[RMDB]
This 207-nucleotide RNA was probed chemically with 2A3 and DMS. 2A3 adducts were read by reverse transcription with SuperScript II with manganese.
RNA sequence: GGGAACGACUCGAGUAGAGUCGAAAAGGUGCUCUGAAUGGAGUGCUCUACUGAGAUUAUAAAAUAGAAGGUAAGCUAUUAUCUCUAACAACAGGGCAGGGCUUGUUGGAAUAGGCGGUAAAGUCUAAAAACUACCUCACCUUCGGGUGAGGUAGAACUUUAGGCAUUAGUUCGCUAAUGCCUAAAGAAAAGAAACAACAACAACAAC
Reactivity to 2A3 in 0.01 (KOAc 150mM, MgCl2 10mM, bicine 150mM(pH8.5), 24C), signal-to-noise 4, nucleotides 027 to 156: g050g010u010g010c010u000c030u080g180a140a100u230g020g010a030g030u030g020c000u000c020u060a070c050u050g020a010g020a050u130u100a080u240a180a120a140a030u100a020g040a090a020g070g030u120a040a010g030c010u030a040u100u040a040u150c010u010c020u040a050a050c050a020a010c010a050g010g020g000c030a010g010g060g000c030u030u010g010u010u010g000g000a080a060u020a010g030g000c030g020g020u110a080a060a020g020u000c030u070a000a070a070a000a000c000u000a010c000c010u010c000a000c000c010u000u020c200g120g000g000u000g000a000g000g010u000a000g000a000a000
Reactivity to DMS in 0.01 (KOAc 150mM, MgCl2 10mM, bicine 150mM(pH8.5), 24C), signal-to-noise 2, nucleotides 027 to 156: g010g020u000g000c020u000c000u000g000a200a080u010g000g000a060g070u010g020c010u000c050u000a050c030u000g010a120g010a160u000u010a150u010a040a120a100a150u000a080g000a170a130g030g020u000a060a120g010c040u000a010u010u000a080u000c030u000c000u010a040a150c060a070a120c030a030g020g040g050c080a060g000g000g000c040u000u000g000u010u010g000g000a120a190u000a050g010g000c070g030g000u010a040a080a090g000u000c040u010a010a030a010a090a150c010u000a000c000c000u000c000a030c000c000u000u010c300g030g000g060u000g010a000g010g030u000a000g010a020a030